[RMDB]
RNA sequence: GGGAACGACUCGAGUAGAGUCGAAAAAGUCUGGUCGAUACGUCGACCAGGCAAUGCCGCCACAACGGCUUCCUGGCGUGGCGGAUCUCAUCCAAUGGAGCAACGCUCCGGAUACGUCCGGAGCGAAAAAAGCUCUGCUUCUUCGGAAGCAGAGCAACCAUGAUGUUGAGUUCGCUCAACAUCAUGGAAAAGAAACAACAACAACAAC
Reactivity to 2A3 in 0.01 (KOAc 150mM, MgCl2 10mM, bicine 150mM(pH8.5), 24C), signal-to-noise 1, nucleotides 027 to 156: a010g010u010c000u000g000g000u000c010g010a000u000a060c190g080u010c000g000a020c000c000a000g000g000c000a010a010u070g030c000c000g000c000c000a000c010a050a000c030g100g000c010u120u120c020c000u030g010g010c050g010u000g000g020c010g000g000a030u020c040u050c050a120u070c030c070a070a170u200g020g000a010g030c020a000a100c030g000c020u010c040c050g000g000a020u030a040c200g060u010c010c030g000g030a020g010c000g020a010a000a000a030a020a000g010c000u000c000u000g000c000u000u010c000u010u030c080g090g000a000a000g030c010a000g000a000g000c010a000a000